[RMDB]
RNA sequence: GGGAACGACUCGAGUAGAGUCGAAAAUUAGCCUGUAGAAUUUCUUUAGGAAAUCCUCUUUGCUGGGCCCCGAACCCCAGCUUGCUUAGCUUGUAGAAUUUCUUUAGGAAAUUCUCUUUGCUGGGGCCAGCCUGGUAUAAUUCGUUAUACCAGGCUGAAAAGAAACAACAACAACAAC
Reactivity to DMS in 0.01 (KOAc 150mM, MgCl2 10mM, bicine 150mM(pH8.5), 24C), signal-to-noise 1, nucleotides 027 to 126: u010u010a060g000c020c090u000g000u050a020g010a080a020u000u000u000c010u000u040u040a130g000g030a010a020a010u000c040c010u020c030u010u010u010g000c040u010g000g000g030c040c020c040c110g020a080a260c050c010c000c000a000g000c010u000u000g010c070u030u010a060g010c120u000u020g000u040a000g000a000a000u000u000u000c010u000u020u030a100g020g000a000a000a000u000u000c000u000c000u010u000u010g020c010u000g000g000g000g030c270
Reactivity to 2A3 in 0.01 (KOAc 150mM, MgCl2 10mM, bicine 150mM(pH8.5), 24C), signal-to-noise 3, nucleotides 027 to 126: u060u040a040g010c000c000u040g100u180a010g010a090a040u060u040u020c040u110u220u190a100g000g100a020a030a030u030c020c000u020c030u090u110u100g070c080u050g010g040g000c000c010c010c030g040a050a050c010c000c000c020a010g020c010u020u110g020c020u130u120a110g010c000u030u080g080u190a000g000a020a000u000u020u030c030u100u210u100a140g010g110a000a000a000u010u000c010u010c010u050u070u130g000c010u010g000g010g010g000c010